[RMDB]
RNA sequence: GGGAACGACUCGAGUAGAGUCGAAAAGUUUACGCUACAAGAUCGGUGGAUAGCAGCCCUAUCAAUAUCUAGGAGAACUGUGCUAUGUUUAGAAGAUUAGGUAGUCUCUAAACAGAACAAUUUACCUCAUACGUUAGGACGUUCGCGUCCUAACGAAGAUGUGAAAUUUGUUCGCAAAUUUCACAUCAAAAGAAACAACAACAACAAC
Reactivity to 2A3 in 0.01 (KOAc 150mM, MgCl2 10mM, bicine 150mM(pH8.5), 24C), signal-to-noise 9, nucleotides 027 to 156: g020u040u060u100a060c050g010c020u040a020c050a100a080g020a160u080c060g030g050u050g020g050a060u050a040g010c040a010g000c020c000c000u050a060u080c060a100a080u070a040u190c070u080a040g000g050a080g030a100a080c040u050g020u020g050c020u030a020u070g020u000u010u010a100g010a280a010g000a030u030u030a020g090g020u030a010g010u000c000u000c000u000a000a010a000c010a010g040a050a020c090a050a030u030u060u070a030c010c000u060c040a090u090a160c010g000u000u000a000g000g000a010c010g010u030u020c150g020c010g070u000c000c000u000a000a000c000g000a000a010
Reactivity to DMS in 0.01 (KOAc 150mM, MgCl2 10mM, bicine 150mM(pH8.5), 24C), signal-to-noise 4, nucleotides 027 to 156: g020u000u000u010a070c080g010c050u000a090c040a080a150g020a070u000c050g010g030u000g000g010a100u000a080g020c050a130g020c040c020c050u000a150u000c040a100a120u000a070u010c100u000a070g000g030a300g000a030a050c060u000g000u000g020c040u000a140u010g010u010u000u000a010g010a090a130g020a030u010u000a110g030g020u010a130g000u000c020u000c000u000a020a010a030c010a020g000a060a030c020a040a070u000u000u000a100c010c020u000c060a110u010a170c020g020u010u000a000g000g000a020c010g000u000u000c300g040c040g010u000c010c000u000a000a000c010g000a040a040